[RMDB]
RNA sequence: GGGAACGACUCGAGUAGAGUCGAAAAAGCGGUUACGACCGCAUUCUAGCCCUGAUAGUAGUGGAAAUCCUUUUUUCUGGCUCCUUUAGCCAGGAAAAAGAUUGCAACGGAUAGCAGGAAAUAGCAAGCGUGAGCAGCUGUUCGCAGCUGCUCACGCAAAAGAAACAACAACAACAAC
Reactivity to 2A3 in 0.01 (KOAc 150mM, MgCl2 10mM, bicine 150mM(pH8.5), 24C), signal-to-noise 1, nucleotides 027 to 126: a000g050c030g010g000u030u000a050c240g040a000c060c000g000c000a000u060u000c000u000a080g040c000c000c000u000g100a080u010a030g130u000a030g050u000g130g180a000a000a130u130c010c060u050u000u000u000u000u050c000u000g010g000c000u040c060c000u140u170u190a010g000c030c000a000g000g000a000a000a000a000a000g000a030u000u000g000c040a080a070c010g180g060a030u000a000g000c020a000g000g080a170a000a080u160a070g040c080a150a050

This 177-nucleotide RNA was probed chemically with 2A3. 2A3 adducts were read by reverse transcription with SuperScript II with manganese. The data come from the RNA Mapping Database (RMDB), library RFM100. The RNA was probed in 150 mM KOAc, 10 mM MgCl2 and 150 mM bicine (pH 8.5) at 24 C.